[RMDB]
RNA sequence: GGGAACGACUCGAGUAGAGUCGAAAAGAUAUGGAGUGUAGGGAGUCGUGGUUCGGAAACGAACCAAACGACGAGGAUCUACCUCCUAAGUCAAAGGGGAAAAUCUUGUUCGCAAGAUUUUCCCCAACAAUCGACGUUAGUUCGCUAACGUCGAUUGAAAAGAAACAACAACAACAAC
Reactivity to DMS in 0.01 (KOAc 150mM, MgCl2 10mM, bicine 150mM(pH8.5), 24C), signal-to-noise 2, nucleotides 027 to 126: g010a030u020a240u000g000g000a040g020u000g020u000a000g010g000g000a020g010u000c000g070u000g000g000u010u020c000g020g000a030a040a120c010g010a000a010c000c010a010a040a080c020g030a000c000g010a110g010g010a020u000c000u000a000c030c000u010c000c000u000a010a070g000u010c030a050a100a180g010g010g000g010a010a010a020a000u000c000u000u000g010u000u010c250g010c000a010a010g010a010u000u000u000u000c000c000c000c020a000a000
Overview
An RNA of 177 nucleotides, treated with DMS and read out base by base. For DMS the reverse transcriptase was MarathonRT. The RNA was probed in 150 mM KOAc, 10 mM MgCl2 and 150 mM bicine (pH 8.5) at 24 C. It was measured as part of the RMDB library TTRDEL.